[RMDB]
RNA sequence: GGGAACGACUCGAGUAGAGUCGAAAAUGAAUUUGAGCUCGUUGAUGACGUCCAUAGACAUGUUACCUAAGACAUGACAUAUCUUAUUAAUAACUCCUCAAUUAGAUAAUACAUAUAACCGAGGAGGUGGCCUACUACUCCACACACAGCGGAGCUGGUAGAGCUAGGCGUUCGCGCCUAGCUCUACAAAAGAAACAACAACAACAAC
Reactivity to 2A3 in 0.01 (KOAc 150mM, MgCl2 10mM, bicine 150mM(pH8.5), 24C), signal-to-noise 1, nucleotides 027 to 156: u100g080a010a030u030u030u160g010a010g030c030u030c080g000u020u220g060a180u030g000a000c010g000u030c080c070a070u110a110g000a010c000a000u030g010u080u000a220c020c020u210a220a130g060a000c000a000u030g010a030c000a040u190a040u100c000u040u130a140u000u130a040a010u000a120a100c000u000c000c000u040c000a020a090u140u000a000g040a000u080a150a180u150a130c030a040u250a000u040a230a040c030c040g000a000g300g030a030g010g010u000g000g000c000c000u000a040c000u000a040c000u070c010c010a030c000a000c060a000c000a060g030c040g100g000a010g010c030u060g000
Chemical mapping of a 207-nucleotide RNA with 2A3. Reactivities are rounded to 0.1 and cut off at 0 and 3. Conditions: 150 mM KOAc, 10 mM MgCl2 and 150 mM bicine (pH 8.5), 24 C.